Chemical mapping of a 177-nucleotide RNA with 2A3 and DMS. For DMS, 1,432 sequencing reads were counted. It was measured as part of the RMDB library OK2TRN. Conditions: 150 mM KOAc, 10 mM MgCl2 and 150 mM bicine (pH 8.5), 24 C.
RNA sequence: GGGAACGACUCGAGUAGAGUCGAAAACGAAAUACAGUACAGCCGCCCGCAUCUCGGUGCCGUAGCCGUGACCUUGGUAACGCAACCCGAGCCAUGAUCCAGAAUCCACCUGACGGGUGAUUGGGAAGGAAGCUAUUAUGUUCGCAUAAUAGCUUCCAAAAGAAACAACAACAACAAC
Reactivity to 2A3 in 0.01 (KOAc 150mM, MgCl2 10mM, bicine 150mM(pH8.5), 24C), signal-to-noise 1, nucleotides 027 to 126: c010g000a000a100a000u240a030c030a000g040u020a050c000a000g030c000c050g020c000c020c000g040c030a050u000c030u010c050g020g030u060g000c050c030g050u030a020g030c010c000g050u060g060a060c050c000u060u120g030g000u030a110a000c040g000c060a030a010c020c010c000g040a010g000c030c000a070u140g000a040u040c030c020a020g050a070a030u060c040c030a050c000c010u090g080a060c090g050g030g000u030g010a060u000u100g050g010g000a010a060
Reactivity to DMS in 0.01 (KOAc 150mM, MgCl2 10mM, bicine 150mM(pH8.5), 24C), signal-to-noise 2, nucleotides 027 to 126: c080g000a080a090a080u000a100c070a070g000u010a090c110a110g060c010c040g020c040c000c050g050c090a090u010c030u000c090g010g010u000g040c070c090g000u000a070g000c030c040g020u020g000a090c120c070u000u030g010g010u010a040a020c100g000c030a090a110c030c000c020g010a070g030c040c060a040u000g020a100u030c070c030a050g030a110a100u000c060c040a050c010c010u010g010a140c150g000g040g010u000g000a070u000u000g000g010g010a180a120